[RMDB]
Chemical mapping of a 177-nucleotide RNA with 2A3 and DMS.
The DMS profile rests on 6,632 reads.
For 2A3 the reverse transcriptase was SuperScript II with manganese.
Reactivities are given for positions 27 through 126.
The 2A3 profile rests on 7,983 reads.
RNA sequence: GGGAACGACUCGAGUAGAGUCGAAAACUGUGCCCUAUUCAAGAUCUUUUCUGAGGGCUUUGCCCACAGCGAGGCCUCCUUCGAAGAGGGCAUCCGCACAAUGGUGCAGAACGAGUCCUUGCUGCAGACCAUAGCACUGGUUCGCCAGUGCUAUGGUAAAAGAAACAACAACAACAAC
Reactivity to 2A3 in 0.01 (KOAc 150mM, MgCl2 10mM, bicine 150mM(pH8.5), 24C), signal-to-noise 8, nucleotides 027 to 126: c050u060g030u050g030c000c000c000u030a100u030u080c050a050a050g050a210u080c090u060u160u140u010c040u120g020a100g000g010g060c000u030u070u110g030c000c010c000a040c010a000g010c010g010a000g000g000c000c010u030c020c030u100u140c090g070a080a050g030a090g080g060g000c010a030u040c030c050g060c000a040c030a100a300u270g110g000u020g000c020a010g050a050a020c030g010a010g030u030c000c000u020u020g000c000u010g000c010a010g080
Reactivity to DMS in 0.01 (KOAc 150mM, MgCl2 10mM, bicine 150mM(pH8.5), 24C), signal-to-noise 4, nucleotides 027 to 126: c020u010g020u010g000c010c000c000u000a090u000u020c040a100a030g000a050u020c130u000u000u020u000c030u010g010a080g000g000g000c010u050u030u050g020c010c010c000a260c020a000g010c150g010a010g000g010c060c020u000c010c100u060u010c080g000a090a060g020a030g000g000g000c020a030u000c060c090g000c030a040c050a240a130u050g000g000u000g000c010a060g000a100a060c210g010a020g020u010c000c030u000u000g000c010u010g010c050a080g000

It was measured as part of the RMDB library OK1LIB.